[RMDB]
RNA sequence: GGGAACGACUCGAGUAGAGUCGAAAAACGGCCUCCUAUGUUGAAGACAUAUCACAUAAACAUACGUAACCAACAUCGCGAGGAGACCGUCUCGCGCCUGCUCAGGGCAACGAUAUGGCGCCAGUCACAGGACCAAUCAAUUCGUUGAUUGGUCCUGAAAAGAAACAACAACAACAAC
Reactivity to 2A3 in 0.01 (KOAc 150mM, MgCl2 10mM, bicine 150mM(pH8.5), 24C), signal-to-noise 2, nucleotides 027 to 126: a000c030g040g000c000c000u020c000c030u020a040u020g030u000u060g030a080a040g070a040c040a060u110a010u100c050a090c030a240u240a110a180a030c070a080u160a110c060g040u020a050a090c020c000a000a000c010a020u050c040g040c120g180a010g000g000a000g050a000c000c030g030u000c000u010c000g020c000g040c000c000u030g060c020u040c080a030g110g140g000c020a020a050c050g060a050u070a060u200g010g000c000g000c000c010a000g030u040c040a000
Reactivity to DMS in 0.01 (KOAc 150mM, MgCl2 10mM, bicine 150mM(pH8.5), 24C), signal-to-noise 3, nucleotides 027 to 126: a100c020g010g000c000c000u010c010c010u000a050u000g010u000u000g000a150a190g020a100c080a040u020a030u000c090a160c270a170u010a070a110a180c210a040u000a030c070g000u000a010a110c160c020a010a030c060a010u000c300g010c230g020a000g000g020a060g050a010c010c010g000u010c020u010c160g000c040g020c080c000u000g000c130u010c060a070g010g000g010c110a090a080c130g000a060u000a120u010g000g020c020g000c010c100a070g000u010c140a120